[RMDB]
Background: Structure probing data (2A3 and DMS) for a 177-nucleotide construct. As a SHAPE reagent, 2A3 marks flexible, mostly unpaired nucleotides at the ribose 2'-OH. Source: RMDB library OK2TRN, as collected in RNAgym. The reactions ran in a buffer of 150 mM KOAc, 10 mM MgCl2 and 150 mM bicine (pH 8.5), at 24 C. For DMS, 5,091 sequencing reads were counted.

RNA sequence: GGGAACGACUCGAGUAGAGUCGAAAACUUGUCCAAGUCCAGGCAUGUGAAAGUGUUCGAAGGAGCAGAGCUCGAGCGGAAAUGAGGCUACUUUGUCAGCUUUAACACUUUGGUGUCGUUUGGGGGCUGUAGUGAUAACCUUCGGGUUAUCACUACAAAAAGAAACAACAACAACAAC
Reactivity to 2A3 in 0.01 (KOAc 150mM, MgCl2 10mM, bicine 150mM(pH8.5), 24C), signal-to-noise 3, nucleotides 027 to 126: c000u030u150g070u040c010c000a050a000g070u040c020c020a010g010g020c000a020u010g090u110g250a030a010a040g020u030g000u080u100c090g030a040a010g000g050a030g000c000a010g010a010g030c030u080c170g140a030g000c050g050g150a060a120a120u180g020a030g100g050c020u030a030c010u100u090u050g060u110c050a040g140c100u000u030u040a040a020c040a010c000u010u040u050g080g010u010g010u000c040g020u050u100u060g040g000g000g000g010c030
Reactivity to DMS in 0.01 (KOAc 150mM, MgCl2 10mM, bicine 150mM(pH8.5), 24C), signal-to-noise 4, nucleotides 027 to 126: c080u010u010g010u000c030c030a130a110g010u010c040c040a120g000g020c020a040u000g020u010g000a030a010a020g000u000g000u000u000c090g040a060a040g020g020a160g000c020a040g000a090g010c160u010c080g000a050g000c040g000g000a070a080a100u000g000a120g020g000c020u000a110c030u000u000u010g010u000c080a170g010c030u000u000u000a010a040c050a020c020u000u000u010g020g020u000g010u000c030g000u000u000u000g000g000g020g010g020c200